Structure probing data (2A3 and DMS) for a 177-nucleotide construct. The 2A3 profile rests on 1,832 reads. The reactions ran in a buffer of 150 mM KOAc, 10 mM MgCl2 and 150 mM bicine (pH 8.5), at 24 C.
RNA sequence: GGGAACGACUCGAGUAGAGUCGAAAAACGAGCGGUCUCUCGGUAGUACCUGUCCGCGAUCGUGGCGCGCAGCAUUUCUCCCAGGUCGCGAUCGCGUCCGCGCAUGUGCGCCUGGCGGUGCAGCUGCGGCGGAUAUUCACUUCGGUGAAUAUCCGCCAAAAGAAACAACAACAACAAC
Reactivity to 2A3 in 0.01 (KOAc 150mM, MgCl2 10mM, bicine 150mM(pH8.5), 24C), signal-to-noise 3, nucleotides 027 to 126: a000c100g010a000g050c010g020g000u010c020u020c020u010c110g040g010u060a050g040u070a100c010c010u010g010u020c030c010g000c020g020a040u070c050g030u030g010g040c050g000c000g000c060a030g010c030a130u100u100u000c060u050c000c000c010a000g060g000u080c020g000c010g090a090u030c060g000c000g020u080c060c040g030c010g010c070a050u120g080u060g100c010g000c010c000u030g050g000c030g000g030u090g000c060a020g000c020u020g010c000
Reactivity to DMS in 0.01 (KOAc 150mM, MgCl2 10mM, bicine 150mM(pH8.5), 24C), signal-to-noise 1, nucleotides 027 to 126: a060c020g000a030g040c000g020g000u000c010u000c000u010c050g120g030u000a060g020u000a200c010c020u000g050u000c070c000g000c040g070a000u030c000g000u000g020g000c070g000c050g000c010a060g000c060a050u000u040u000c050u000c070c000c000a100g020g030u000c060g000c000g000a130u000c130g010c000g000u000c130c070g000c040g030c030a020u020g000u040g050c020g050c020c000u010g000g040c050g020g000u020g010c130a050g000c100u000g000c050